Structure probing data (2A3) for a 177-nucleotide construct. The data come from the RNA Mapping Database (RMDB), library RFM100.

RNA sequence: GGGAACGACUCGAGUAGAGUCGAAAAACACCAGCGCUUACGAGCGCUGGUGAAACUAGCACUGACGUGCUAGGCUGAGUUAUGCCGUACCUUCGGUACUACGAGGCUGCAUACGUGCAGCCUCGAAACCCAAGUGCAGUUUCGACUGCACUUGGGUAAAAGAAACAACAACAACAAC
Reactivity to 2A3 in 0.01 (KOAc 150mM, MgCl2 10mM, bicine 150mM(pH8.5), 24C), signal-to-noise 2, nucleotides 027 to 126: a010c000a020c120c010a000g000c010g010c000u020u170a090c300g060a040g070c040g000c000u000g030g000u000g000a020a000a010c000u000a000g010c000a010c010u150g070a100c290g020u000g000c000u000a000g020g000c070u030g070a030g150u170u070a130u230g050c080c030g060u110a100c020c050u070u130c040g110g000u060a120c070u090a060c040g000a000g000g000c000u000g000c000a010u040a040c120g080u030g010c000a000g000c000c000u000c000g000a000a000
Conditions: 150 mM KOAc, 10 mM MgCl2 and 150 mM bicine (pH 8.5), 24 C.